[RMDB]
RNA sequence: GGGAACGACUCGAGUAGAGUCGAAAAGAUAUGGAGGUAGGGCGAUAAGAAAUCACAUCGGAAACGAUGUAUUUCUUUUGACGCCUGUUCUCCUAAGUCAAAACGACCUGGGUUCGCCCAGGUCGAAUCGAACAAAUUUCUUCGGAAAUUUGUUCGAAAAAGAAACAACAACAACAAC
Reactivity to DMS in 0.01 (KOAc 150mM, MgCl2 10mM, bicine 150mM(pH8.5), 24C), signal-to-noise 2, nucleotides 027 to 126: g010a030u010a300u020g000g010a000g000g000u010a200g000g020g030c000g030a140u020a010a030g000a020a020a000u000c170a000c000a000u010c000g020g000a160a050a210c000g010a000u000g020u000a000u000u000u010c000u000u010u010u010g010a110c090g000c000c020u000g000u010u000c000u000c000c000u010a010a160g010u000c020a130a100a100a300c020g010a040c000c000u010g010g000g010u000u020c230g010c000c000c000a000g000g010u000c000g010a010a040